An RNA of 177 nucleotides, treated with 2A3 and DMS and read out base by base. The reactions ran in a buffer of 150 mM KOAc, 10 mM MgCl2 and 150 mM bicine (pH 8.5), at 24 C. Reactivities are given for positions 27 through 126.
RNA sequence: GGGAACGACUCGAGUAGAGUCGAAAAAUUGCAACAGGGCCGAAGCGUGCGAGACGAUACCUGCAGAACAAGCACCGGCCAACUACGUACCAGCGGCCGAGGAAAGACGCAGGAUACGAGCGCAUCAAAAUAUAUUUUAAUUCGUUAAAAUAUAUUUAAAAGAAACAACAACAACAAC
Reactivity to 2A3 in 0.01 (KOAc 150mM, MgCl2 10mM, bicine 150mM(pH8.5), 24C), signal-to-noise 5, nucleotides 027 to 126: a000u040u090g010c030a050a040c040a140g040g050g000c010c010g070a080a010g040c040g040u020g010c010g020a050g020a070c030g010a020u110a190c000c000u020g010c020a040g060a140a040c050a130a020g050c040a030c060c000g000g000c000c000a030a020c020u110a030c050g100u070a080c020c040a020g050c020g040g000c000c020g030a090g010g060a080a040a020g020a010c030g000c010a000g000g000a000u040a040c010g000a020g020c020g000c010a020u070c020a060
Reactivity to DMS in 0.01 (KOAc 150mM, MgCl2 10mM, bicine 150mM(pH8.5), 24C), signal-to-noise 6, nucleotides 027 to 126: a060u020u020g010c090a090a070c080a110g010g000g020c040c030g010a090a070g010c120g010u010g000c010g000a100g000a080c030g020a080u010a060c010c000u000g000c010a100g010a110a110c180a070a090g020c100a150c060c020g010g000c010c000a050a150c120u010a090c150g020u020a050c160c070a090g000c270g000g010c010c010g000a090g010g000a170a090a070g010a120c090g000c010a010g000g000a080u010a020c050g010a170g000c040g000c020a030u020c040a030